Source information
Source: RMDB library OK2TST, as collected in RNAgym. The record gives the reactivity of an RNA of 177 nucleotides to 2A3 and DMS. The 2A3 profile rests on 2,330 reads. DMS adducts were read by reverse transcription with MarathonRT.
RNA sequence: GGGAACGACUCGAGUAGAGUCGAAAAUGUCGGCACGGCGCGGCUGUCGGUCGAAAAGAAAUUGCGCCCCGUUGGCAGGACAUCCGGCCGCCCGCGUGUCGGCGCCCCCGAUGGCCCCGGCGGCACAACCUCAUCCAGUAUUCGUACUGGAUGAGGUAAAAGAAACAACAACAACAAC
Reactivity to 2A3 in 0.01 (KOAc 150mM, MgCl2 10mM, bicine 150mM(pH8.5), 24C), signal-to-noise 2, nucleotides 027 to 126: u070g000u010c000g000g040c010a020c050g190g140c000g130c170g010g010c030u000g020u000c010g030g000u070c080g030a010a140a000a000g080a020a120a030u170u120g030c070g050c020c010c000c010g190u150u160g030g000c070a040g010g030a020c020a050u060c010c030g010g000c000c000g000c000c000c000g010c020g010u020g030u000c000g030g020c000g000c000c000c000c010c000g140a180u100g050g000c020c030c000c020g080g040c090g020g000c030a020c020a070
Reactivity to DMS in 0.01 (KOAc 150mM, MgCl2 10mM, bicine 150mM(pH8.5), 24C), signal-to-noise 3, nucleotides 027 to 126: u010g020u000c010g020g000c010a030c000g020g030c150g030c130g030g010c010u000g000u000c020g030g010u000c120g000a080a050a110a080g010a050a100a140u010u010g010c070g010c030c000c080c110g010u000u000g020g010c070a080g000g000a110c080a080u000c030c030g010g000c000c050g000c010c010c030g020c020g000u020g010u000c000g020g000c010g010c030c030c030c030c040g000a110u020g010g010c010c030c050c080g010g010c130g020g030c050a080c190a080